[RMDB]
RNA sequence: GGGAACGACUCGAGUAGAGUCGAAAAGUGGAGAGAACCAGAAUGCUUAUUCAGUCAGCAGAGGAAAUUGACCAUGAUGGAAACUGAGAUUUGAUGCUCUUUGUAGGAAUGUUCAGUCUAUGCCAAAGCACCAGCUAAAAUUCGUUUUAGCUGGUGCAAAAGAAACAACAACAACAAC
Reactivity to 2A3 in 0.01 (KOAc 150mM, MgCl2 10mM, bicine 150mM(pH8.5), 24C), signal-to-noise 4, nucleotides 027 to 126: g060u050g010g010a010g000a000g010a030a030c020c020a000g090a110a050u050g000c040u070u090a050u170u200c060a080g040u030c070a000g040c000a020g070a060g100g080a050a100a090u100u100g060a120c000c030a030u060g040a060u070g080g030a000a030a170c020u040g000a000g010a110u050u090u150g080a130u140g050c000u000c000u040u060u130g090u110a040g000g100a040a040u060g040u060u010c040a030g080u000c030u040a060u120g070c030c000a070a030a000
Reactivity to DMS in 0.01 (KOAc 150mM, MgCl2 10mM, bicine 150mM(pH8.5), 24C), signal-to-noise 3, nucleotides 027 to 126: g030u000g010g010a300g000a120g020a050a090c070c060a050g000a040a070u000g000c030u010u020a040u000u060c160a120g020u000c140a030g000c100a030g010a080g000g000a060a090a100u020u020g010a070c100c000a050u040g010a130u010g010g000a090a070a040c090u010g000a030g000a070u000u010u000g010a090u010g000c030u000c070u010u000u020g000u030a050g000g000a040a080u010g000u010u000c030a030g000u020c050u000a060u010g030c000c070a010a090a160

Notes: Conditions: 150 mM KOAc, 10 mM MgCl2 and 150 mM bicine (pH 8.5), 24 C. Structure probing data (2A3 and DMS) for a 177-nucleotide construct. DMS adducts were read by reverse transcription with MarathonRT. The 2A3 profile rests on 2,606 reads. 2A3 adducts were read by reverse transcription with SuperScript II with manganese.